RNA sequence: GGGAACGACUCGAGUAGAGUCGAAAAGGGUCAGUUUCGACUGACCCAAAAAGAUAUGGAGUCGUCAACAGCAAGAACGAUCCAUCGGAAACGAUGGUAGAGUUUGAUGACCUGUUGAGCGACUCCUAAGUCAAAAACCAUGGAUUCGUCCAUGGAAGUCUACGUUCCCUUUCGAGGGAACGUAGACAAAAGAAACAACAACAACAAC
Reactivity to 2A3 in 0.01 (KOAc 150mM, MgCl2 10mM, bicine 150mM(pH8.5), 24C), signal-to-noise 1, nucleotides 027 to 156: g030g000g000u040c040a040g000u060u050u210c260g080a040c000u000g000a000c000c140c060a030a020a000a000a000g030a000u070a060u070g020g000a020g030u020c010g020u030c010a000a000c000a000g110c010a020a300g040a060a000c050g000a030u030c000c000a030u000c010g000g040a020a090a060c020g000a030u010g010g030u100a030g030a010g000u000u000u000g110a150u060g100a090c010c030u020g000u010u000g000a100g060c040g000a000c000u050c000c000u000a000a000g040u000c000a000a000a000a000a150c000c020a000u020g000g000a050u050u070c150g000u000c110c000a000u000g000g000a080a000